[RMDB]
RNA sequence: GGGAACGACUCGAGUAGAGUCGAAAACGCGAUUUUAUCGCCAACAACUACUAUCAAUAUGGCUUUAAAGAGCUUAUCAUGAUCUCCGCCGAACAUGGUAGAAACAUCGAUCUCUUACGCGAAGCUCCAAGACAAAUAGCUUCGGCUAUUUGUCUUGAAAAGAAACAACAACAACAAC
Reactivity to 2A3 in 0.01 (KOAc 150mM, MgCl2 10mM, bicine 150mM(pH8.5), 24C), signal-to-noise 5, nucleotides 027 to 126: c040g010c010g000a030u090u070u060u300a060u070c010g000c020c000a030a020c010a040a010c030u170a030c010u070a080u250c030a100a060u110a140u300g010g000c000u070u080u160a080a110a020g030a000g000c020u080u090a040u090c040a030u100g090a070u010c020u000c030c030g040c010c000g070a080a080c050a110u150g000g000u030a030g100a080a070a000c020a030u050c030g030a080u020c030u010c020u100u070a030c040g030c030g040a040a010g030c000u000c040
Reactivity to DMS in 0.01 (KOAc 150mM, MgCl2 10mM, bicine 150mM(pH8.5), 24C), signal-to-noise 5, nucleotides 027 to 126: c240g010c020g000a050u000u000u000u010a040u010c010g010c010c070a060a060c120a090a080c050u000a080c120u010a090u010c120a070a120u010a100u010g010g000c020u000u000u000a080a100a080g000a030g010c300u010u000a050u000c090a040u000g010a090u000c040u000c060c090g010c080c030g010a080a090c120a050u000g010g010u010a040g010a060a050a060c150a040u010c050g010a050u000c010u000c000u000u010a060c080g010c050g000a040a060g010c050u000c070